[RMDB]
An RNA of 207 nucleotides, treated with 2A3 and read out base by base. Values cover nucleotides 27 to 156. The 2A3 profile rests on 757 reads. High 2A3 reactivity points to a flexible backbone, as in loops and unpaired stretches.
RNA sequence: GGGAACGACUCGAGUAGAGUCGAAAAGAAUGUUACCAUUGUGCGACCAAUGGUAACAUGAUUGCCAUCCUUGAGUAUUGACGCUACAAUACUGGAUCAUAAGCGACUAUGAUGAAGGAUGGCAAUGCUAACUACAAGGUCGCAUUUGUGGUUAGGAUCCCAGUACCGUAUUCGUACGGUACUGGGAAAAAGAAACAACAACAACAAC
Reactivity to 2A3 in 0.01 (KOAc 150mM, MgCl2 10mM, bicine 150mM(pH8.5), 24C), signal-to-noise 1, nucleotides 027 to 156: g140a000a060u040g000u010u000a000c000c000a000u000u000g030u060g170c130g120a080c060c000a000a000u000g000g010u000a000a000c000a000u000g000a000u000u000g040c000c000a000u000c050c010u020u090g030a020g020u000a000u000u030g110a110c090g020c260u200a160c060a000a000u000a000c000u040g110g040a010u010c000a000u000a000a080g030c030g020a000c000u010a000u030g000a000u010g080a000a000g010g000a000u000g000g000c000a000a000u000g000c000u000a000a000c000u020a020c000a080a080g090g000u000c000g010c000a000u060u130u030g000u000g000g020u000u000a030g010g040a080